[RMDB]
RNA sequence: GGGAACGACUCGAGUAGAGUCGAAAAGUUUAUCGGAUCGUGUGUAACGGGCAGGGAAACGGCCCGGUUUGGGCCGUUUCUGUUUUCCAAAAAGGGAUCAGCCGGCGUUGCGGCGGGUGAGCGAGAAGCAUAUCGUAAAUUUCGAUUUACGAUAUGCAAAAGAAACAACAACAACAAC
Reactivity to 2A3 in 0.01 (KOAc 150mM, MgCl2 10mM, bicine 150mM(pH8.5), 24C), signal-to-noise 2, nucleotides 027 to 126: g030u060u070u060a120u150c020g020g020a030u050c040g020u040g000u010g000u070a040a060c040g000g010g030c040a040g020g000g000a020a000a010c020g020g010c050c050c020g050g070u080u100u060g040g010g050c050c000g020u010u010u010c010u000g000u000u020u020u050c000c000a080a000a000a000a000g050g000g020a040u050c040a020g050c040c000g050g020c040g020u040u080g010c000g020g010c000g000g010g000u030g000a030g020c000g010a030g000a060a010
Chemical mapping of a 177-nucleotide RNA with 2A3.
As a SHAPE reagent, 2A3 marks flexible, mostly unpaired nucleotides at the ribose 2'-OH.
For 2A3 the reverse transcriptase was SuperScript II with manganese.
The data come from the RNA Mapping Database (RMDB), library OK2TST.
Conditions: 150 mM KOAc, 10 mM MgCl2 and 150 mM bicine (pH 8.5), 24 C.
The 2A3 profile rests on 3,099 reads.